[RMDB]
RNA sequence: GGGAACGACUCGAGUAGAGUCGAAAAAUGACCGGGCCAUUUCUUAUCGCGUACAUCAGGGAUACGACCAUCGCGGCGUCGCACUGUCUGCGGGGGUGCAGCGCAUGGUGCGCUCAGAUCUUGCCUCCGAGCCUUAGAGAUUCGUCUCUAAGGCUCGAAAAGAAACAACAACAACAAC
Reactivity to DMS in 0.01 (KOAc 150mM, MgCl2 10mM, bicine 150mM(pH8.5), 24C), signal-to-noise 2, nucleotides 027 to 126: a070u000g030a160c010c000g010g000g010c040c020a100u000u000u010c040u010u000a040u020c100g020c060g000u010a060c140a060u010c090a080g000g000g000a150u000a070c070g000a100c050c050a070u000c130g040c080g010g000c100g000u000c060g000c040a020c100u000g030u010c090u020g050c080g050g000g020g010g020u000g000c100a080g020c060g010c050a110u000g010g020u000g030c040g040c040u010c070a080g000a030u000c050u000u000g000c040c030u010c100
Reactivity to 2A3 in 0.01 (KOAc 150mM, MgCl2 10mM, bicine 150mM(pH8.5), 24C), signal-to-noise 1, nucleotides 027 to 126: a040u110g060a050c010c040g000g010g000c020c000a060u100u100u060c020u100u090a070u150c060g030c000g020u020a040c020a060u070c070a030g000g040g020a100u050a170c060g030a070c010c000a020u080c020g000c060g030g000c030g030u050c020g080c000a040c040u040g030u230c030u060g020c080g010g000g000g000g000u030g030c060a050g000c020g000c030a020u090g110g010u070g000c020g000c020u010c000a000g000a020u010c030u020u070g000c020c000u010c010

Chemical mapping of a 177-nucleotide RNA with DMS and 2A3.
The RNA was probed in 150 mM KOAc, 10 mM MgCl2 and 150 mM bicine (pH 8.5) at 24 C.
The 2A3 profile rests on 1,572 reads.
For DMS, 1,362 sequencing reads were counted.